[RMDB]
RNA sequence: GGGAACGACUCGAGUAGAGUCGAAAAGAUAUGGACCUGGACAGGGAGAAGGUACUCGGAAACGAGUACACUUCAUCGAUCUGUAGAGGGUCCUAAGUCAAAAGGCGAAAGGUUCGCCUUUCGCCAAGUUCAGCUGUAAGUUCGCUUACAGCUGAACAAAAGAAACAACAACAACAAC
Reactivity to 2A3 in 0.01 (KOAc 150mM, MgCl2 10mM, bicine 150mM(pH8.5), 24C), signal-to-noise 2, nucleotides 027 to 126: g000a000u020a000u060g000g000a000c010c040u060g050g110a020c010a010g000g060g000a050g030a020a000g010g040u000a010c010u020c000g020g020a050a000a000c000g010a000g010u010a010c050a090c010u000u000c010a060u300c010g000a000u000c010u020g030u050a080g140a300g300g020g000u000c000c000u000a020a010g030u000c030a050a000a050a150g010g000c000g000a010a010a000g090g030u090u150c300g230c050c000u000u040u000c000g000c000c010a000a000
Reactivity to DMS in 0.01 (KOAc 150mM, MgCl2 10mM, bicine 150mM(pH8.5), 24C), signal-to-noise 2, nucleotides 027 to 126: g010a020u000a060u020g000g000a000c000c000u000g000g010a070c020a010g020g000g000a020g010a010a000g030g000u000a000c000u000c000g020g010a010a040a030c000g020a020g010u000a010c000a040c000u000u000c010a290u000c280g010a020u000c000u000g020u000a120g000a300g020g000g000u000c000c000u010a000a080g000u000c010a120a070a150a110g010g020c000g010a010a050a020g000g020u000u000c300g020c000c000u000u000u000c000g000c000c020a030a040